Structure probing data (DMS and 2A3) for a 177-nucleotide construct. DMS adducts were read by reverse transcription with MarathonRT.
[RMDB]
RNA sequence: GGGAACGACUCGAGUAGAGUCGAAAAGAUAUGGAGCAUGCUUUCGCAGAUAAUGGGAAUAAUGUCGGAAACGACUAUCCCAUUGUAGAAAGGUGCUCCUAAGUCAAAAGAUACGUUCGCGUAUCAAGAGUCUAUCUGUGUUCGCACAGAUAGACUCAAAAGAAACAACAACAACAAC
Reactivity to DMS in 0.01 (KOAc 150mM, MgCl2 10mM, bicine 150mM(pH8.5), 24C), signal-to-noise 1, nucleotides 027 to 126: g010a020u000a150u020g000g000a010g000c020a010u020g020c000u000u010u000c020g000c180a140g020a030u010a000a000u000g030g040g000a060a260u020a070a080u010g060u000c000g030g010a040a030a070c000g010a010c020u020a100u000c010c000c000a000u000u010g020u000a050g030a010a010a000g000g030u000g000c000u000c000c000u020a000a010g000u020c010a100a020a090a200g000a020u010a010c000g010u000u000c200g000c020g010u000a000u000c000a060a080
Reactivity to 2A3 in 0.01 (KOAc 150mM, MgCl2 10mM, bicine 150mM(pH8.5), 24C), signal-to-noise 2, nucleotides 027 to 126: g020a000u020a000u080g030g000a010g000c030a000u300g300c050u080u050u000c030g100c160a060g010a240u120a080a030u000g030g000g010a010a120u200a270a160u300g020u040c020g000g010a010a000a020c010g020a000c020u040a050u020c000c000c000a010u000u050g010u000a030g000a000a010a000g010g000u000g010c000u000c000c000u000a000a000g010u000c010a000a000a000a070g010a010u000a040c010g020u040u100c300g000c000g140u030a000u010c000a010a050